[RMDB]
RNA sequence: GGGAACGACUCGAGUAGAGUCGAAAAGAAGAGAAUAACGGUGUAAGUGCAGCCCGUCUUACACCGUAAGGCACAGCGGAAACGCUGAUGUCAAAUACAGGGCUGCGAGACGGAAGUAGACCGUCAACGGCUAGCGCAUAUUCGUAUGCGCUAGCCGAAAAGAAACAACAACAACAAC
Reactivity to 2A3 in 0.01 (KOAc 150mM, MgCl2 10mM, bicine 150mM(pH8.5), 24C), signal-to-noise 1, nucleotides 027 to 126: g150a000a000g100a000g050a100a060u300a260a000c000g000g000u000g020u000a000a100g000u020g000c000a010g040c010c020c000g020u030c000u000u010a000c000a000c000c020g010u050a010a030g000g000c000a000c000a040g000c000g000g050a160a000a000c020g090c000u000g000a030u000g010u000c020a000a000a000u060a000c150a110g070g000g060c010u000g000c100g000a060g000a000c000g020g000a160a130g030u140a000g000a040c000c000g000u000c000a050a000